RNA sequence: GGGAACGACUCGAGUAGAGUCGAAAAACGUUUUAACACAUGCAGCUCACAGACCUAGAAAUAAGGCAUAUCCUUAGCAGGCAGCAUGUGGAGGAAGACAUAAGUGUCUUUUCGUAGGUGUGUCCGAGUAAAAAUGAUGAUCAUAAUGAUAAAAGCAAUUUACCGAUUAGUUCGCUAAUCGGUAAAUAAAAGAAACAACAACAACAAC
Reactivity to 2A3 in 0.01 (KOAc 150mM, MgCl2 10mM, bicine 150mM(pH8.5), 24C), signal-to-noise 5, nucleotides 027 to 156: a000c090g030u100u080u050u100a130a010c020a010c010a030u020g030c040a020g020c020u070c050a100c020a050g100a140c000c020u060a040g080a080a110a030u160a070a020g020g000c020a040u040a110u220c010c020u030u040a020g050c040a020g090g000c020a000g010c010a040u010g010u040g010g000a040g000g050a020a010g040a010c010a030u140a140a140g070u020g000u000c000u010u030u020u060c080g050u060a020g020g020u040g000u010g020u060c050c020g020a020g020u110a010a100a020a040a060u090g060a060u040g040a030u110c040a040u100a160a030u120g120a020u110a100a070a050a000g080c020a030
Reactivity to DMS in 0.01 (KOAc 150mM, MgCl2 10mM, bicine 150mM(pH8.5), 24C), signal-to-noise 3, nucleotides 027 to 156: a110c050g030u000u000u000u000a050a230c040a030c040a050u010g020c030a120g010c040u000c070a200c050a120g010a080c030c030u000a100g000a080a080a120u000a030a030g020g010c030a120u000a070u000c020c030u010u000a130g000c070a110g020g040c030a020g020c030a030u000g010u000g020g020a190g000g010a090a050g020a060c060a070u000a060a160g020u000g010u000c010u000u000u010u010c050g020u000a070g010g030u000g000u000g020u000c030c050g010a170g010u000a020a030a000a070a090u000g020a100u020g020a040u000c030a120u000a080a080u010g020a140u000a040a060a040a070g000c080a090